Source: RMDB library OK1LIB, as collected in RNAgym.
This 177-nucleotide RNA was probed chemically with 2A3 and DMS.
2A3 adducts were read by reverse transcription with SuperScript II with manganese.
The reactions ran in a buffer of 150 mM KOAc, 10 mM MgCl2 and 150 mM bicine (pH 8.5), at 24 C.
RNA sequence: GGGAACGACUCGAGUAGAGUCGAAAAUAAAAACAGGUUAAUGUGAAUAUCCGAAUACAGCUCCUAUAAUAUGGGUGUAUGGUUCAAAUUACGUAAUAAAACAAUCUAAUUAUAAUAGAUUGGAGCACUUAUAUUUACCAUUCGUGGUAAAUAUAAGAAAAGAAACAACAACAACAAC
Reactivity to 2A3 in 0.01 (KOAc 150mM, MgCl2 10mM, bicine 150mM(pH8.5), 24C), signal-to-noise 6, nucleotides 027 to 126: u110a000a090a010a000a020c050a020g040g070u100u150a100a060u110g040u030g110a070a100u100a050u160c090c060g030a030a020u040a030c000a030g030c030u090c010c000u060a040u090a270a200u220a110u170g020g060g000u010g010u020a280u060g010g000u030u030c030a040a070a120u080u080a060c040g040u050a040a150u060a110a170a000a030c010a000a000u000c000u000a060a100u250u190a150u130a300a170u040a060g000a000u000u020g010g010a020g040c000a000
Reactivity to DMS in 0.01 (KOAc 150mM, MgCl2 10mM, bicine 150mM(pH8.5), 24C), signal-to-noise 2, nucleotides 027 to 126: u030a070a060a050a080a060c120a070g000g040u000u030a050a110u000g010u000g010a080a090u000a060u060c120c130g000a030a040u010a090c050a060g000c030u000c010c030u000a160u010a120a080u020a300u020g020g020g000u000g000u010a000u010g020g010u010u000c040a060a060a050u010u010a060c100g000u040a060a070u030a080a060a080a100c000a010a000u000c000u000a010a110u020u040a060u070a110a100u000a000g000a010u000u000g000g000a090g030c200a120